[RMDB]
RNA sequence: GGGAACGACUCGAGUAGAGUCGAAAAGUGCCGGCAAUACAGUGUGUAUGGAGGUCUCAAUGGCUCGGAAGUGCCAGCAAACCGGCGUAGAUAUUAGCAGACGUAUGGGCGUUAGACUUUUAUUGAAAAAAGUACAUAAGCUUCGGCUUAUGUACAAGAUAAUAGAAAUCUUCGGAUUUCUAUUAUCAAAAGAAACAACAACAACAAC
Reactivity to DMS in 0.01 (KOAc 150mM, MgCl2 10mM, bicine 150mM(pH8.5), 24C), signal-to-noise 2, nucleotides 027 to 156: g000u000g020c010c000g000g000c030a080a080u020a050c040a150g000u000g030u000g030u010a090u000g020g010a140g040g020u000c010u000c070a090a190u000g030g000c030u000c010g010g010a160a210g010u000g010c010c000a090g010c080a050a120a130c020c000g030g070c040g020u000a080g000a050u000a070u000u010a060g020c000a300g000a080c050g010u010a130u010g040g020g030c010g000u000u000a060g010a300c050u000u000u000u000a050u030u000g000a000a070a080a060a070a160g000u000a020c010a000u000a020a010g010c030u000u010c300g060g030c000u000u000a000u000g000u000a000c000a000a060
Reactivity to 2A3 in 0.01 (KOAc 150mM, MgCl2 10mM, bicine 150mM(pH8.5), 24C), signal-to-noise 2, nucleotides 027 to 156: g070u040g000c000c000g010g000c020a030a010u060a070c050a080g140u060g030u010g020u180a050u090g040g010a050g010g030u020c030u030c080a070a110u110g020g000c040u040c080g050g090a130a040g000u030g060c010c010a030g050c070a030a010a070c010c010g000g020c000g010u080a070g010a040u060a030u110u060a040g020c030a020g010a050c020g020u040a120u110g110g090g020c010g020u030u050a020g030a030c000u040u060u120u150a130u040u130g020a100a000a000a100a000a000g000u000a000c000a000u000a000a000g000c000u020u040c230g050g000c000u030u000a000u000g020u000a000c010a000a000